This 177-nucleotide RNA was probed chemically with DMS.

RNA sequence: GGGAACGACUCGAGUAGAGUCGAAAAGAUGGUGCCGGGGACCUGGGAGCAGGGCAGCAACGAGCCCGAGGCGCCCGACGGAUCGGGGAGAGGGGGAGGCGACGGCUUACCGCACGACAGCAAGUAACCAUUAUCCGUCAUUCGUGACGGAUAAUGGAAAAGAAACAACAACAACAAC
Reactivity to DMS in 0.01 (KOAc 150mM, MgCl2 10mM, bicine 150mM(pH8.5), 24C), signal-to-noise 1, nucleotides 027 to 126: g000a140u000g000g050u000g010c040c050g030g010g030g030a030c090c000u020g040g010g000a130g000c020a280g010g000g040c060a060g020c080a070a070c270g000a090g000c010c000c010g000a080g010g030c020g000c000c000c020g030a160c110g020g000a040u010c050g000g000g000g000a160g000a130g010g000g000g000g000a140g000g000c120g010a120c070g000g020c070u000u000a010c040c050g000c060a120c010g000a100c060a070g000c060a040a080g010u000a050a100
For DMS the reverse transcriptase was MarathonRT.